[RMDB]
RNA sequence: GGGAACGACUCGAGUAGAGUCGAAAAAAUUGCAUUACUGUUGGUGAAUGUGCGACAGAAACGGUAGUGUUUAACAUCUGUUGACACCAAAGCUAGGAGAAUAACGAUAAUGCACUGCUGCACGAAACCUCGGUGAUCCAUUCGUGGAUCACCGAGGAAAAGAAACAACAACAACAAC
Reactivity to 2A3 in 0.01 (KOAc 150mM, MgCl2 10mM, bicine 150mM(pH8.5), 24C), signal-to-noise 1, nucleotides 027 to 126: a120a020u220u100g170c210a030u250u100a050c090u130g180u090u070g130g010u000g020a300a000u300g080u100g000c000g000a000c000a130g170a000a000a000c000g130g000u230a000g000u030g060u000u130u050a130a000c000a120u000c240u150g000u000u000g000a120c000a000c140c000a000a000a170g040c040u080a020g250g000a200g010a240a240u100a060a020c000g060a100u000a080a170u040g060c000a000c060u130g040c150u000g000c000a000c000g000a010a000a000